[RMDB]
RNA sequence: GGGAACGACUCGAGUAGAGUCGAAAAUUUUGAGACAGGGUCUUGCUCUGUUGCUAAGGCUGGAGAGCAGUGGGAAGAACCUAGCUCACUGCAGCCAUGACCUCCUGGGCUGAAGGGAUCCUCCCACCAAACGUCCGGUAUUCGUACCGGACGUUUGAAAAGAAACAACAACAACAAC
Reactivity to DMS in 0.01 (KOAc 150mM, MgCl2 10mM, bicine 150mM(pH8.5), 24C), signal-to-noise 1, nucleotides 027 to 126: u010u000u040u010g010a110g000a120c050a070g010g010g000u000c060u000u000g000c030u010c020u000g030u000u000g030c090u020a100a130g020g000c040u000g000g000a070g000a160g080c000a020g030u000g020g000g020a010a090g040a080a140c210c070u000a080g010c000u000c000a030c000u000g030c020a110g030c030c000a030u020g000a120c060c020u000c050c070u010g000g000g020c000u000g000a080a140g010g000g000a070u000c010c020u000c020c020c040a230c260